[RMDB]
RNA sequence: GGGAACGACUCGAGUAGAGUCGAAAACUGGAGCUACAGGGCCUCACUUUAUUGGCAGCCAAAGACAAGGAGAGAAGAUUGGGAUAUUUCUCUAUUCACCGCUAAAGCUAACUGACACAAGACAACAAAUUGACAGUUGAUUCGUCAACUGUCAAUUAAAAGAAACAACAACAACAAC
Reactivity to DMS in 0.01 (KOAc 150mM, MgCl2 10mM, bicine 150mM(pH8.5), 24C), signal-to-noise 4, nucleotides 027 to 126: c060u010g000g000a120g000c050u000a080c090a090g010g000g010c040c030u000c110a040c090u010u000u000a090u000u000g010g020c040a080g010c050c060a020a070a060g010a040c080a080a090g000g010a060g010a040g000a030a040g000a140u010u010g010g000g000a120u000a100u010u000u000c020u000c020u000a100u000u000c040a050c050c050g020c040u020a040a080a090g010c040u000a040a060c090u000g010a060c090a060c120a040a040g000a060c070a040a040c110a030
Reactivity to 2A3 in 0.01 (KOAc 150mM, MgCl2 10mM, bicine 150mM(pH8.5), 24C), signal-to-noise 3, nucleotides 027 to 126: c000u010g060g010a010g010c020u070a050c050a060g010g030g050c020c010u070c020a060c010u110u170u090a120u140u120g070g000c020a010g050c030c010a050a050a010g050a030c040a030a040g060g020a030g030a000g010a080a000g060a060u070u100g030g040g020a010u010a070u100u060u010c030u000c020u040a100u090u080c080a050c040c030g000c080u110a080a030a020g050c000u020a050a050c030u050g030a000c020a020c010a110a040g110a030c040a060a010c010a000
The record gives the reactivity of an RNA of 177 nucleotides to DMS and 2A3. The DMS profile rests on 3,147 reads. High DMS reactivity at an A or C suggests that its Watson-Crick edge is free. Conditions: 150 mM KOAc, 10 mM MgCl2 and 150 mM bicine (pH 8.5), 24 C. The 2A3 profile rests on 2,667 reads. For 2A3 the reverse transcriptase was SuperScript II with manganese. Source: RMDB library OK2TST, as collected in RNAgym.